Chemical mapping of a 177-nucleotide RNA with DMS. For DMS the reverse transcriptase was MarathonRT. It was measured as part of the RMDB library TTRINS. For DMS, 653 sequencing reads were counted. In probing experiments dimethyl sulfate is read out at A N1 and C N3, which are open when not base-paired. The reactions ran in a buffer of 150 mM KOAc, 10 mM MgCl2 and 150 mM bicine (pH 8.5), at 24 C.
RNA sequence: GGGAACGACUCGAGUAGAGUCGAAAAGAUAUGGACGUCAGAACGUUUCUUGGACCCACCUACCCACCCUCGGAAUCGGAAACGAUUCCCGAGGAGGGUGGCUAGAAACGUUCUGACGUCCUAAGUCCGUUAACUAAGGCUUCGGCCUUAGUUAACGAAAAGAAACAACAACAACAAC
Reactivity to DMS in 0.01 (KOAc 150mM, MgCl2 10mM, bicine 150mM(pH8.5), 24C), signal-to-noise 1, nucleotides 027 to 126: g000a150u010a300u030g000g010a020c000g000u000c000a030g000a060a030c010g010u000u010u000c000u000u010g060g000a100c300c030c050a050c040c020u000a070c050c090c300a300c120c000c000u000c000g010g000a020a000u000c000g000g000a130a120a180c000g030a020u000u000c100c020c030g000a010g010g000a120g010g000g030u000g000g000c000u000a020g000a000a000a020c010g040u000u010c000u000g000a000c000g000u000c000c000u000a060a170g020u000c040